Source: RMDB library TTRDES, as collected in RNAgym.
Structure probing data (DMS) for a 177-nucleotide construct.
For DMS the reverse transcriptase was MarathonRT.
[RMDB]
RNA sequence: GGGAACGACUCGAGUAGAGUCGAAAAGAUAUGGAAUCUCCAGCUAGCGACUAGUCGGAAACGACUAGAUCGCUUGGACCUGGUGAUUCCUAAGUCAAAUCUGGAUUAACUUCGGUUAAUCCAGAAAUCGAAGAUACGAGUUCGCUCGUAUCUUCGAAAAAGAAACAACAACAACAAC
Reactivity to DMS in 0.01 (KOAc 150mM, MgCl2 10mM, bicine 150mM(pH8.5), 24C), signal-to-noise 1, nucleotides 027 to 126: g000a000u000a100u010g010g000a050a000u000c000u000c000c010a010g030c050u000a010g070c020g010a080c010u000a010g000u000c020g020g000a030a000a050c000g000a020c000u000a010g000a100u000c000g020c000u000u010g010g000a050c300c000u010g000g020u000g000a040u010u010c000c000u000a000a080g010u010c000a130a150a200u010c000u000g010g010a000u010u000a000a000c000u000u010c250g060g030u000u000a010a010u000c000c000a000g000a010a070a070

Values cover nucleotides 27 to 126.
For DMS, 1,046 sequencing reads were counted.